[RMDB]
RNA sequence: GGGAACGACUCGAGUAGAGUCGAAAAGAUAUGGAUGCGCGCACUCCGAUAAGACGCACUCGGAAACGAGUGGCGUCUUUUGACGGAGGAUCGCAUCCUAAGUCAAAGUACGCCUUCGGGCGUACAAUCAUUAAAGACCCUUCGGGGUCUUUAAUGAAAAAGAAACAACAACAACAAC
Reactivity to DMS in 0.01 (KOAc 150mM, MgCl2 10mM, bicine 150mM(pH8.5), 24C), signal-to-noise 2, nucleotides 027 to 126: g000a050u010a300u000g000g020a010u000g030c020g020c120g030c300a300c010u010c000c000g020a170u000a010a010g020a020c010g000c000a060c000u000c000g020g000a110a150a200c010g000a010g010u010g000g010c000g010u000c000u000u000u000u000g030a220c090g000g020a020g000g020a150u000c010g010c000a050u010c000c000u010a020a100g020u000c050a100a090a130g000u000a000c020g000c000c010u010u030c280g030g000g020c000g010u000a010c010a080a080